[RMDB]
Source: RMDB library TTRINS, as collected in RNAgym. The record gives the reactivity of an RNA of 177 nucleotides to DMS.
RNA sequence: GGGAACGACUCGAGUAGAGUCGAAAAGAUAUGGACCUGCAACGCUCGAUUCAGCUUGGAUUUAUUCGUAACAUCCAUCGGAAACGAUGGUGGAAUUGUCAGCUGGGAGCGUUGCAGGUCCUAAGUCCAACAAGUUAGCGUUCGCGCUAACUUGUUGAAAAGAAACAACAACAACAAC
Reactivity to DMS in 0.01 (KOAc 150mM, MgCl2 10mM, bicine 150mM(pH8.5), 24C), signal-to-noise 1, nucleotides 027 to 126: g000a110u020a300u010g020g010a030c020c010u010g010c000a030a000c000g000c000u020c000g000a260u020u040c000a000g040c030u010u030g030g030a010u000u000u000a050u000u010c010g000u000a020a060c270a030u000c010c000a020u000c020g000g000a140a130a300c000g050a040u000g000g020u000g000g000a030a010u000u000g000u000c000a030g020c000u010g000g010g010a010g010c010g030u000u000g010c000a000g010g010u010c000c000u000a000a080g030u000c040
The reactions ran in a buffer of 150 mM KOAc, 10 mM MgCl2 and 150 mM bicine (pH 8.5), at 24 C.